[RMDB]
RNA sequence: GGGAACGACUCGAGUAGAGUCGAAAAAAACAGAGCAGGGCAUACCGAGGACCAGUUACCUCGUAAAUACAUCUGGAAACCAAUAGUCGCAAACGACGAAAACUACGCUCUAGCCGCUUAAAUCCGGCUGGACUCCGCACCGGUGGGCCUCAACGCCGUUAGAAGGAUUGUUCGCAAUCCUUCUAACAAAAGAAACAACAACAACAAC
Reactivity to 2A3 in 0.01 (KOAc 150mM, MgCl2 10mM, bicine 150mM(pH8.5), 24C), signal-to-noise 3, nucleotides 027 to 156: a000a010a040c080a040g030a010g030c020a030g000g020g000c020a030u060a100c060c000g000a020g000g010a020c020c010a020g020u110u110a070c000c010u020c020g060u050a020a050a020u110a040c030a020u040c020u040g040g020a100a040a020c040c010a040a110u040a100g020u000c010g020c150a100a080a100c060g060a010c020g010a020a000a020a020c050u080a030c080g040c040u000c000u010a010g010c000c010g040c060u090u190a050a040a060u050c030c010g000g030c000u020g000g000a000c020u040c050c030g060c040a040c050c010g020g010u020g010g030g010c010c000u050c030a060a060c050g060c050c040
Reactivity to DMS in 0.01 (KOAc 150mM, MgCl2 10mM, bicine 150mM(pH8.5), 24C), signal-to-noise 1, nucleotides 027 to 156: a020a010a000c030a000g010a130g000c000a040g000g020g020c020a080u000a040c180c000g000a020g000g000a080c060c030a150g000u010u000a070c000c010u010c020g030u020a010a040a070u000a040c050a100u020c050u020g000g000a130a070a130c050c020a040a090u000a040g010u020c000g000c030a100a090a160c050g010a080c010g010a050a060a050a070c010u000a020c030g010c100u000c020u000a020g010c000c020g020c070u010u000a050a030a080u000c080c010g020g050c030u000g020g000a010c020u010c020c030g020c000a050c050c030g010g020u000g020g040g040c020c010u010c040a050a120c040g020c040c040